[RMDB]
RNA sequence: GGGAACGACUCGAGUAGAGUCGAAAAUCACAAUGCGUUCCAGCUCACGUAAGUGGUUAUUCGGGGCGACGUUGUGUGUGUUCGUUUUCGUGAGCUUGCAACUAUAUCAUUCGAUUGACACAAGGAAUCACUAGGGGUGGUUCGCCACCCCUAGUGAAAAAGAAACAACAACAACAAC
Reactivity to 2A3 in 0.01 (KOAc 150mM, MgCl2 10mM, bicine 150mM(pH8.5), 24C), signal-to-noise 2, nucleotides 027 to 126: u060c000a010c000a020a010u180g000c000g000u000u000c000c000a020g000c100u150c040a010c010g040u050a150a180g000u040g160g000u070u170a040u190u160c130g000g030g000g070c000g010a240c010g000u070u000g000u040g000u000g000u000g000u140u130c050g000u000u010u190u010c050g000u020g050a000g080c000u000u030g020c000a100a000c060u120a050u020a070u140c060a050u150u300c120g130a100u040u020g010a010c020a000c000a150a030g060g050a090a040
Reactivity to DMS in 0.01 (KOAc 150mM, MgCl2 10mM, bicine 150mM(pH8.5), 24C), signal-to-noise 2, nucleotides 027 to 126: u030c000a010c050a130a000u030g000c000g010u000u010c030c020a130g000c100u000c030a030c030g050u080a070a080g030u000g010g000u010u080a130u050u020c130g000g000g000g000c040g090a090c040g060u000u050g000u000g000u000g000u010g000u040u020c130g000u020u000u000u000c050g000u020g040a030g000c000u000u010g020c080a060a060c150u030a180u060a010u000c030a170u000u000c100g000a090u010u000g000a200c300a080c040a060a030g000g010a120a120